[RMDB]
RNA sequence: GGGAACGACUCGAGUAGAGUCGAAAACUAAAUCUCCAGGAACGGGGGUGAUGCCUCUUGGUUAUAGAAGGUUUUACUCCUAGAAAGGAAUAGCCGUGUCUGUGUAUGAAGCACUGACGUUUGCGGUAAGUAGAGAGUUGUUCGCAACUCUCUACUUAAAAGAAACAACAACAACAAC
Reactivity to 2A3 in 0.01 (KOAc 150mM, MgCl2 10mM, bicine 150mM(pH8.5), 24C), signal-to-noise 7, nucleotides 027 to 126: c030u070a050a030a130u090c060u010c020c000a080g050g090a160a070c110g000g000g000g000g000u010g000a000u020g010c020c000u010c030u090u050g290g090u290u120a140u080a140g150a190a060g030g010u010u000u030u020a010c000u020c000c010u050a090g080a100a090a010g050g000a040a110u090a090g020c020c000g180u210g020u100c000u050g010u000g020u040a110u280g170a200a020g020c000a000c000u020g000a010c030g060u050u110u260g020c000g000g000u030
Reactivity to DMS in 0.01 (KOAc 150mM, MgCl2 10mM, bicine 150mM(pH8.5), 24C), signal-to-noise 5, nucleotides 027 to 126: c040u010a070a130a090u050c100u010c010c000a040g010g000a180a150c170g000g000g000g010g010u000g010a020u000g000c020c000u000c010u000u000g000g040u030u010a080u040a020g020a060a040g000g020u000u000u000u000a020c000u000c000c000u010a080g000a130a170a090g010g000a070a080u020a120g010c010c010g000u000g000u000c000u000g000u010g000u000a100u030g030a110a180g010c000a010c010u010g000a020c010g020u010u010u030g010c000g000g000u010